Background
The record gives the reactivity of an RNA of 207 nucleotides to 2A3. Reactivities are given for positions 27 through 156. Source: RMDB library OK3TST, as collected in RNAgym. The 2A3 profile rests on 470 reads. 2A3 is a SHAPE reagent: it acylates the 2'-hydroxyl of flexible nucleotides of all four kinds. The reactions ran in a buffer of 150 mM KOAc, 10 mM MgCl2 and 150 mM bicine (pH 8.5), at 24 C. For 2A3 the reverse transcriptase was SuperScript II with manganese.
[RMDB]
RNA sequence: GGGAACGACUCGAGUAGAGUCGAAAAUGUAAAGGUUCAUAUAGCUAUCGCAUCUGCGGCGAUUCCUGUAUAAAAAACUUUAAUUUCAUUUCUGACCCAUCAGGCACCAGGAUCUAACAGCGUAAGCUAGCUAACUAACGUCUCCAUGUACCGGACCCCUCUAGUGCCAGUUCGCUGGCACUAGAGGAAAAGAAACAACAACAACAAC
Reactivity to 2A3 in 0.01 (KOAc 150mM, MgCl2 10mM, bicine 150mM(pH8.5), 24C), signal-to-noise 1, nucleotides 027 to 156: u140g030u060a040a070a050g000g060u100u150c030a010u100a000u000a120g020c000u010a010u080c000g030c030a060u130c200u280g090c140g040g000c010g010a000u060u040c000c010u020g060u050a050u140a030a120a020a030a000a010c120u150u130u110a100a140u120u150u170c060a030u050u070u080c100u080g110a110c010c030c000a050u150c100a080g000g000c030a000c000c040a010g030g020a050u010c050u060a010a070c010a030g020c030g010u050a060a020g030c000u000a020g020c030u050a020a060c060u020a090a030c090g010u030c060u050c030c020a090u120g030u030a080c070c060g040g040a050c000c000